[RMDB]
RNA sequence: GGGAACGACUCGAGUAGAGUCGAAAAAGUCGUAUGUACGCAUACGACAUUACUUAGUCUCCUAGCCUAACGGCUAAUGGCUGGUGGUUUUUUAACCACCGGCCUAGACUAGUCUACGGACUAGUCACAAAUAUUCACUGUUCGCAGUGAAUAUUUGAAAAGAAACAACAACAACAAC
Reactivity to DMS in 0.01 (KOAc 150mM, MgCl2 10mM, bicine 150mM(pH8.5), 24C), signal-to-noise 9, nucleotides 027 to 126: a070g010u000c000g010u000a000u000g010u010a110c220g040c010a010u000a000c000g000a020c000a040u010u010a050c150u020u020a120g000u010c070u010c010c110u000a020g010c000c000u000a130a160c300g000g000c010u000a050a070u010g000g000c000u000g000g010u000g000g000u000u000u020u020u020u040a010a020c000c000a010c000c000g000g000c000c000u000a010g010a010c010u000a000g000u000c000u000a120c180g020g000a010c000u000a000g010u000c000a120
Reactivity to 2A3 in 0.01 (KOAc 150mM, MgCl2 10mM, bicine 150mM(pH8.5), 24C), signal-to-noise 9, nucleotides 027 to 126: a000g000u000c000g000u000a000u010g030u020a020c270g000c110a000u000a000c000g000a000c000a000u000u010a050c020u050u090a030g070u010c030u010c060c020u020a010g000c000c010u080a110a050c080g010g010c000u020a090a090u130g000g000c000u000g000g000u000g010g040u000u000u010u000u030u170a010a000c000c000a000c000c000g000g000c000c000u000a010g000a000c000u000a000g010u000c000u010a040c260g030g000a000c000u000a000g000u000c000a000